[RMDB]
RNA sequence: GGGAACGACUCGAGUAGAGUCGAAAAUCUAUCACCAGCCCAUGUUUACGACACGAAUGGGCAGUUGCAAAUUACGUAUAGCUCUUGCAACAUCGUGUCGAAACGUUCCCAAGCUAUACGCCACAAAGUCAAUUGUGACAUUCGUGUCACAAUUGACAAAAGAAACAACAACAACAAC
Reactivity to DMS in 0.01 (KOAc 150mM, MgCl2 10mM, bicine 150mM(pH8.5), 24C), signal-to-noise 1, nucleotides 027 to 126: u030c040u000a050u000c050a040c050c050a120g010c030c010c010a120u000g000u000u000u000a120c070g010a010c010a020c000g000a060a020u010g050g010g040c080a090g010u000u000g000c020a040a030a190u000u000a080c040g000u000a010u000a050g010c010u000c210u010u000g000c030a000a020c010a080u000c010g000u010g020u020c030g010a020a030a300c050g000u000u000c000c000c000a160a070g010c000u000a010u000a010c000g020c070c160a090c120a070a040a060
Reactivity to 2A3 in 0.01 (KOAc 150mM, MgCl2 10mM, bicine 150mM(pH8.5), 24C), signal-to-noise 2, nucleotides 027 to 126: u030c010u010a140u100c030a020c090c000a030g000c000c000c020a040u080g080u050u110u020a070c030g000a000c010a010c000g070a070a070u180g000g030g060c000a020g010u000u010g000c030a040a080a140u230u050a090c000g030u010a020u010a010g000c030u010c020u120u060g020c010a030a000c000a050u000c020g040u020g040u010c010g050a090a100a010c010g030u000u000c000c000c000a000a000g000c000u000a000u000a030c070g000c010c000a090c030a040a160a000
Chemical mapping of a 177-nucleotide RNA with DMS and 2A3.
DMS adducts were read by reverse transcription with MarathonRT.
The RNA was probed in 150 mM KOAc, 10 mM MgCl2 and 150 mM bicine (pH 8.5) at 24 C.
The 2A3 profile rests on 2,099 reads.
2A3 adducts were read by reverse transcription with SuperScript II with manganese.